[RMDB]
RNA sequence: GGGAACGACUCGAGUAGAGUCGAAAACCCACCAAGUUCUUAUCAAGAGAAGCAGGGGGACUGGCCCCACGAAGCUUCAGCAACCGGUGUAAUGGCGAAAGCCAUGACCAAGGUGCUAAAUCCAGCAAGCUCGAACAGCUUGGAAGAUAAGAACAGACCGUAAUUUAGGUUUCGACCUAAAUUACGGAAAAGAAACAACAACAACAAC
Reactivity to 2A3 in 0.01 (KOAc 150mM, MgCl2 10mM, bicine 150mM(pH8.5), 24C), signal-to-noise 2, nucleotides 027 to 156: c050c000c010a010c010c050a110a040g020u000u000c000u000u010a030u070c070a160a010g070a030g020a090a010g000c060a140g040g010g000g000g000a040c110u100g120g190c010c000c000c000a020c040g040a150a020g010c000u020u000c000a000g000c000a010a050c000c020g050g000u050g050u140a120a060u000g010g000c000g070a090a010a010g000c000c000a000u000g010a000c000c010a080a020g000g000u000g000c000u050a060a090a060u030c030c020a000g040c030a120a020g010c010u090c140g150a160a100c040a030g010c010u030u110g010g050a060a070g010a000u000a000a000g020a010a000c000a000g070a010

The record gives the reactivity of an RNA of 207 nucleotides to 2A3. For 2A3 the reverse transcriptase was SuperScript II with manganese. For 2A3, 910 sequencing reads were counted.